[RMDB]
The record gives the reactivity of an RNA of 177 nucleotides to 2A3.
The 2A3 profile rests on 2,018 reads.
The reactions ran in a buffer of 150 mM KOAc, 10 mM MgCl2 and 150 mM bicine (pH 8.5), at 24 C.
It was measured as part of the RMDB library M2PK50.
RNA sequence: GGGAACGACUCGAGUAGAGUCGAAAAGUCACAGCGUUCGCGCUGUGACAAAUAAAAACUCAGGUAACGUGCGAACCUGAGAAAAUAAAAACGUACGAAAUAAAAGCAAAUCGUUCGCGAUUUGCAACGGUAGUAAGGUGUUCGCACCUUACUACCGAAAAGAAACAACAACAACAAC
Reactivity to 2A3 in 0.01 (KOAc 150mM, MgCl2 10mM, bicine 150mM(pH8.5), 24C), signal-to-noise 1, nucleotides 027 to 126: g010u000c000a000c010a010g010c020g030u090u130c130g000c000g030c060u020g010u000g010a000c010a000a000a000u010a000a010a000a010a010c020u000c000a000g000g030u030a190a070c020g010u020g000c000g000a040a020c010c030u020g000a010g060a030a060a000a010u100a000a020a010a000a000c000g010u000a000c010g120a060a050a010u130a000a090a040a020g000c010a000a000a000u010c020g000u060u090c260g020c010g050a000u000u010u000g000c010a020a000